[RMDB]
RNA sequence: GGGAACGACUCGAGUAGAGUCGAAAAGGACGUCGAGAGAUGCAUCGGGUCAAGACAACUCCCAGGGUUGGGUCCAAGUCCAAGUGGUUUCUGGACGUUGGUCCAGAUAUGCUGUGCAGUGCCUAAGGGGAUCUAAAUGGUUCGCCAUUUAGAUCCCAAAAGAAACAACAACAACAAC
Reactivity to DMS in 0.01 (KOAc 150mM, MgCl2 10mM, bicine 150mM(pH8.5), 24C), signal-to-noise 1, nucleotides 027 to 126: g040g000a040c130g010u000c030g000a190g000a140g010a120u000g000c040a050u000c050g010g030g000u020c080a100a090g010a060c110a090a090c120u000c010c000c050a170g020g020g040u010u020g020g010g010u000c000c020a050a110g000u000c030c020a040a090g010u010g010g000u000u000u000c020u010g030g020a020c010g010u050u000g030g010u000c010c030a010g000a060u000a060u020g010c040u000g020u000g010c000a030g000u000g000c040c030u030a090a170g010
An RNA of 177 nucleotides, treated with DMS and read out base by base.
Conditions: 150 mM KOAc, 10 mM MgCl2 and 150 mM bicine (pH 8.5), 24 C.
For DMS the reverse transcriptase was MarathonRT.
Source: RMDB library RFMREP, as collected in RNAgym.